[RMDB]
RNA sequence: GGGAACGACUCGAGUAGAGUCGAAAAGGCAGUCGGUUUGGCGUUUUUGUUCGUAGCGAUGAUGCUUUUCAUCUGACGCGACGUGAAGACCAAACGCAGUUAAGAACCGUAGAUGACACGAAUUUAAUGAAGCAGUCAUUUUCGAAUGACUGCUUCAAAAAGAAACAACAACAACAAC
Reactivity to DMS in 0.01 (KOAc 150mM, MgCl2 10mM, bicine 150mM(pH8.5), 24C), signal-to-noise 5, nucleotides 027 to 126: g000g020c060a090g010u000c030g020g000u000u000u000g000g000c030g010u010u000u030u030u010g010u030u000c000g040u000a100g000c280g020a130u010g000a000u000g000c300u020u020u010u010c020a010u000c000u010g000a230c150g000c010g000a030c040g010u020g020a120a110g010a120c200c260a020a010a000c010g010c030a100g040u000u020a050a080g000a040a050c010c000g000u000a090g000a070u020g010a080c180a100c130g000a110a170u030u000u010a040a190
Reactivity to 2A3 in 0.01 (KOAc 150mM, MgCl2 10mM, bicine 150mM(pH8.5), 24C), signal-to-noise 2, nucleotides 027 to 126: g040g000c040a030g110u070c000g000g000u000u000u030g040g030c020g000u000u000u010u000u110g150u050u000c000g010u010a030g000c050g000a000u040g000a000u120g200c190u150u050u000u080c000a020u000c050u050g010a010c020g000c000g000a020c000g050u040g160a040a000g020a030c050c080a000a000a000c000g000c000a030g050u230u150a140a040g010a050a070c000c040g000u060a110g010a140u160g030a040c020a000c120g030a060a050u040u150u020a100a160
Source: RMDB libraries RFM100 and RFMREP, as collected in RNAgym.
Structure probing data (DMS and 2A3) for a 177-nucleotide construct.
The 2A3 profile rests on 777 reads.
The reactions ran in a buffer of 150 mM KOAc, 10 mM MgCl2 and 150 mM bicine (pH 8.5), at 24 C.
For 2A3 the reverse transcriptase was SuperScript II with manganese.